This 207-nucleotide RNA was probed chemically with 2A3. Conditions: 150 mM KOAc, 10 mM MgCl2 and 150 mM bicine (pH 8.5), 24 C. It was measured as part of the RMDB library RNAMAK.

RNA sequence: GGGAACGACUCGAGUAGAGUCGAAAAACCGCAGGUUUCGACCUGCGGUAAAAACCGUAGGAUUCGCAGAUAGCUAGAUGGGUAUUCGAAAGAGUACGAUUCAUCUUGGACCUGUAGAAUCCUAAACGGAAAAAACGCGGGAUUUCGAUCCCGCGAAGAUUGUGAACUACUUCGGUAGUUCACAAUCAAAAGAAACAACAACAACAAC
Reactivity to 2A3 in 0.01 (KOAc 150mM, MgCl2 10mM, bicine 150mM(pH8.5), 24C), signal-to-noise 1, nucleotides 027 to 156: a000c000c010g050c000a000g000g070u090u100u270c140g080a070c000c000u000g000c000g000g010u000a010a010a010a020a000c000c000g000u000a010g000g000a000u010u000c000g000c030a000g070a180u140a190g140c000u020a010g010a010u000g030g020g010u010a030u020u040c000g010a100a010a090g000a010g010u020a000c030g050a100u140u180c010a000u000c000u030u040g040g070a100c000c010u020g000u050a140g070a000a000u000c000c000u000a010a010a000c000g000g070a200a060a020a050a000a000c030g000c030g050g000g010a030u100u160u140c100g040a020u000c000c000c000g000c000g000a050a020